[RMDB]
RNA sequence: GGGAACGACUCGAGUAGAGUCGAAAAGAUAUGGAUCGGGGUUGGGAGAAUGUCGGAAACGACAAUUCGAAGAACAACUUCGAUCCUAAGUCAAACCAGUCGAAGGACUUCGGUCCUUCGACUGGAACGCUGUAUAUAGGUUCGCCUAUAUACAGCGAAAAGAAACAACAACAACAAC
Reactivity to 2A3 in 0.01 (KOAc 150mM, MgCl2 10mM, bicine 150mM(pH8.5), 24C), signal-to-noise 4, nucleotides 027 to 126: g010a010u060a030u110g000g000a000u000c000g010g020g000g010u010u010g030g020g010a040g010a020a020u010g000u010c010g020g050a060a050a050c010g010a010c030a090a300u020u010c030g080a170a020g040a070a030c000a010a000c000u010u010c000g000a000u000c000c000u000a010a010g010u010c020a000a040a140c000c000a020g000u010c010g000a010a000g000g020a010c000u080u190c300g080g000u020c000c000u030u010c000g020a000c000u000g000g000a010a010
Reactivity to DMS in 0.01 (KOAc 150mM, MgCl2 10mM, bicine 150mM(pH8.5), 24C), signal-to-noise 3, nucleotides 027 to 126: g010a030u000a300u010g000g000a000u010c010g000g010g010g000u000u000g000g020g020a150g010a030a020u000g010u000c000g010g000a050a100a150c000g010a010c000a020a120u000u000c000g000a120a180g010a130a180c010a010a000c000u000u000c000g000a000u000c000c000u000a000a070g000u010c020a090a140a170c000c000a010g000u000c010g010a020a020g010g010a020c000u000u020c190g020g020u000c000c000u000u000c010g000a010c000u000g000g010a020a050

The data come from the RNA Mapping Database (RMDB), library TTRDEL. The record gives the reactivity of an RNA of 177 nucleotides to 2A3 and DMS. For 2A3 the reverse transcriptase was SuperScript II with manganese. The DMS profile rests on 4,018 reads. Reactivities are given for positions 27 through 126.